RNA sequence: GGGAACGACUCGAGUAGAGUCGAAAAGAUAUGGAUGGGUACAAGUUCCCCUUAAGACAUGCUGUCGCCAUCGGAAACGAUGGCGGCAGCAACAGCUUAAGGGGAACUUGUACACCAUCCUAAGUCAUCAUUGAAUCAGCUUCGGCUGAUUCAAUGAAAAAGAAACAACAACAACAAC
Reactivity to DMS in 0.01 (KOAc 150mM, MgCl2 10mM, bicine 150mM(pH8.5), 24C), signal-to-noise 1, nucleotides 027 to 126: g020a070u010a300u010g020g020a030u000g000g000g000u000a010c010a010a000g020u000u020c010c000c000c000u010u000a000a000g000a040c130a280u000g030c000u000g030u000c010g070c000c000a020u010c000g040g000a150a110a220c000g000a020u020g000g000c000g000g000c000a000g000c030a010a020c190a150g020c010u010u000a000a000g000g000g010g000a000a000c000u000u020g000u000a000c020a110c000c000a000u010c000c000u000a010a040g000u000c020a170
The data come from the RNA Mapping Database (RMDB), library TTRINS. This 177-nucleotide RNA was probed chemically with DMS. The RNA was probed in 150 mM KOAc, 10 mM MgCl2 and 150 mM bicine (pH 8.5) at 24 C. For DMS the reverse transcriptase was MarathonRT.